RNA sequence: GGGAACGACUCGAGUAGAGUCGAAAAGUGGAGGCGAAAGUCACCCUCCUCGCAUCGCAAGUUCGUGCUUGCGACUUACACGUAGGGCGAGGGGUGGGCGAAAGUUGCCAUGAGACCGUAACUUGCGAUGAGGCGGGACUGUUCGCAGUCCCGCCAACUUAUAUUUUCAGUUCGCUGAAAAUAUAAGAAAAGAAACAACAACAACAAC
Reactivity to DMS in 0.01 (KOAc 150mM, MgCl2 10mM, bicine 150mM(pH8.5), 24C), signal-to-noise 1, nucleotides 027 to 156: g020u000g040g010a160g000g000c010g000a060a090a160g000u000c020a070c000c000c000u010c000c000u000c060g030c120a120u000c010g020c010a070a040g040u010u000c300g070u000g010c000u010u010g000c030g000a020c040u020u000a140c130a060c080g030u000a110g020g020g000c040g020a040g000g020g040g040u000g020g010g040c020g030a090a070a260g000u020u090g020c080c050a110u020g010a180g100a140c040c030g010u010a060a140c060u010u030g000c050g030a120u010g000a130g010g140c070g130g030g020a090c000u020g020u000u000c230g010c000a060g000u000c000c010c040g000c010c000a000a030
Reactivity to 2A3 in 0.01 (KOAc 150mM, MgCl2 10mM, bicine 150mM(pH8.5), 24C), signal-to-noise 2, nucleotides 027 to 156: g100u060g020g020a020g000g070c030g050a200a030a010g100u110c020a120c020c000c010u000c020c020u000c010g000c020a020u000c000g000c010a020a000g000u220u210c060g190u300g060c010u010u010g000c000g000a000c030u100u150a050c110a000c090g230u160a120g030g110g000c010g010a010g030g000g000g030u180g000g000g010c030g020a080a000a000g030u040u060g010c050c030a040u070g010a020g000a020c000c050g000u020a030a040c020u050u150g010c040g130a120u080g090a070g080g000c010g030g030g000a000c000u020g100u080u130c240g020c070a000g000u000c010c000c000g000c000c000a000a000